[RMDB]
RNA sequence: GGGAACGACUCGAGUAGAGUCGAAAAACAAGGAUGCCAUUCAGUGAGGGCUUACUAUGUGCCAGGCAGAGUGUUAAGGACUUUUAUGUAGCUUUCACUUUUUAACUUUAUUCUCUAUCUGGGCAAUGUUAUAAACUGACUUUGUAAGUGCAAAAAAUAUCCUAUGCAUGUUCGCAUGCAUAGGAUAAAAAGAAACAACAACAACAAC
Reactivity to 2A3 in 0.01 (KOAc 150mM, MgCl2 10mM, bicine 150mM(pH8.5), 24C), signal-to-noise 3, nucleotides 027 to 156: a000c030a010a010g050g020a060u060g040c020c010a080u050u070c040a030g010u010g100a100g010g050g050c050u120u100a020c030u040a080u100g020u120g140c000c000a010g010g020c030a000g020a010g050u070g030u090u120a010a040g030g030a040c040u130u030u060u150a120u250g050u050a030g040c010u080u160u100c080a030c000u140u140u030u090u090a060a000c030u010u060u070a060u160u070c030u000c010u030a050u040c030u000g000g040g010c010a010a060u040g030u050u110a100u080a180a000a000c050u020g030a030c020u130u080u010g070u070a050a100g010u030g040c040a050a010a000a200a010a060
Reactivity to DMS in 0.01 (KOAc 150mM, MgCl2 10mM, bicine 150mM(pH8.5), 24C), signal-to-noise 2, nucleotides 027 to 156: a050c040a060a110g010g010a130u000g000c060c030a100u000u000c070a110g020u010g010a170g000g010g010c050u000u010a090c040u000a070u010g020u000g010c020c010a060g020g040c060a100g010a080g000u010g010u010u000a060a060g020g000a100c050u000u000u000u000a100u020g000u000a070g000c000u010u000u000c050a070c040u000u000u020u000u000a020a120c020u000u000u000a060u040u000c030u000c010u000a050u000c040u000g010g020g020c050a070a060u000g010u020u000a130u000a040a100a100c070u010g000a030c050u000u000u000g010u000a020a060g030u000g010c030a000a010a070a080a040a160